[RMDB]
RNA sequence: GGGAACGACUCGAGUAGAGUCGAAAAACCUUUGUGAGUACUAAGGCGUGUUGUCAGAUGGUAGAGGCCCAUUGGGCCUCCAAACAUCUUGGAUUUACACGCUAUGUACUCACUCUGGUAAAAACGCAAAAAUAAUCUUCGGAUUAUUUUUGCGUAAUCAAUGUUGCGAGUUCGCUCGCAACAUUGAAAAAGAAACAACAACAACAAC
Reactivity to 2A3 in 0.01 (KOAc 150mM, MgCl2 10mM, bicine 150mM(pH8.5), 24C), signal-to-noise 1, nucleotides 027 to 156: a000c000c010u000u000u040g000u020g000a000g020u000a000c020u080a110a110g070g000c010g000u000g020u010u020g010u010c010a010g000a000u000g000g020u050a010g000a000g020g000c000c050c050a140u140u260g010g020g030c000c000u010c000c010a090a260a000c010a020u000c000u070u090g130g000a020u130u160u300a000c000a000c010g050c010u000a000u000g000u000a010c000u000c000a000c000u000c000u010g000g020u050a060a060a200a010a000c000g020c010a000a000a000a010a000u010a000a000u000c020u050u070c250g040g000a000u000u000a000u000u000u000u000u000g000c010g000u000a000a000